[RMDB]
The record gives the reactivity of an RNA of 177 nucleotides to DMS and 2A3. The reactions ran in a buffer of 150 mM KOAc, 10 mM MgCl2 and 150 mM bicine (pH 8.5), at 24 C. Source: RMDB libraries RFM100 and RFMREP, as collected in RNAgym.

RNA sequence: GGGAACGACUCGAGUAGAGUCGAAAAUUUCGACCCCUUGCCGUACUGACGCCCGAAUCCUGAUUCCUUGCGAAUCCGUGUUCGGGGCCCCGAUUGGCUUCGGCCCGUCGGAGGGGUGGCCCACCACCGAUGGGCAAACAUUCGUGUUUGCCCAUCGAAAAGAAACAACAACAACAAC
Reactivity to DMS in 0.01 (KOAc 150mM, MgCl2 10mM, bicine 150mM(pH8.5), 24C), signal-to-noise 4, nucleotides 027 to 126: u010u020u020c080g000a070c020c000c000c020u010u020g030c110c030g020u040a090c150u020g000a100c070g000c000c000c000g020a010a000u030c200c010u000g010a010u000u010c000c030u020u040g030c130g010a010a020u010c010c080g000u010g000u000u000c020g000g000g010g000c040c120c010c010g010a020u000u000g000g020c000u000u070c200g010g000c000c020c040g000u000c000g000g010a050g020g010g000g030u010g000g000c010c010c020a160c120c100a080c170
Reactivity to 2A3 in 0.01 (KOAc 150mM, MgCl2 10mM, bicine 150mM(pH8.5), 24C), signal-to-noise 6, nucleotides 027 to 126: u090u120u080c040g080a030c000c000c000c010u030u100g060c040c010g090u130a160c100u140g100a050c030g060c010c000c020g000a010a010u050c010c000u010g000a010u010u020c000c010u160u300g050c160g050a000a000u000c000c010g010u010g010u020u010c000g010g000g000g010c010c000c000c000g020a030u010u020g000g000c000u010u040c160g110g000c000c000c000g020u010c000g010g000a050g000g010g010g000u010g030g010c010c000c010a050c020c030a040c030
Reactivities are given for positions 27 through 126.